[RMDB]
RNA sequence: GGGAACGACUCGAGUAGAGUCGAAAAGACACUCAGUUCGCUGAGUGUCAAAAAAAAUCAGCGGUUAAAAACGAGGCGUUAUAACCGCUGAACGCCUCGUUAAAAGAACCAAGUUCGCUUGGUUCAACGAUUAACUGUUGUUCGCAACAGUUAAUCGAAAAGAAACAACAACAACAAC
Reactivity to DMS in 0.01 (KOAc 150mM, MgCl2 10mM, bicine 150mM(pH8.5), 24C), signal-to-noise 3, nucleotides 027 to 126: g010a010c000a000c010u000c000a000g020u000u010c200g040c010u000g000a020g010u010g010u000c000a000a000a000a010a060a030a090a060u010c020a020g020c010g000g000u000u010a030a030a050a040a020c010g010a070g020g020c040g020u000u000a130u000a030a040c000c010g020c040u000g000a010a010c040g020c010c010u000c080g010u000u000a040a060a070a090g000a010a000c000c010a000a010g010u000u010c200g010c010u000u000g000g010u000u000c000a040a090
Reactivity to 2A3 in 0.01 (KOAc 150mM, MgCl2 10mM, bicine 150mM(pH8.5), 24C), signal-to-noise 2, nucleotides 027 to 126: g000a000c000a000c000u000c000a000g030u080u080c130g060c130u000g000a000g000u000g000u000c010a000a000a010a000a000a000a010a020u030c010a010g000c010g090g020u090u110a110a110a020a020a010c020g010a050g150g050c040g020u000u030a050u020a090a020c000c000g000c010u000g000a000a000c010g010c000c010u020c020g000u020u080a030a040a010a080g000a000a000c000c010a000a000g040u040u070c180g020c080u000u000g020g000u000u000c000a000a000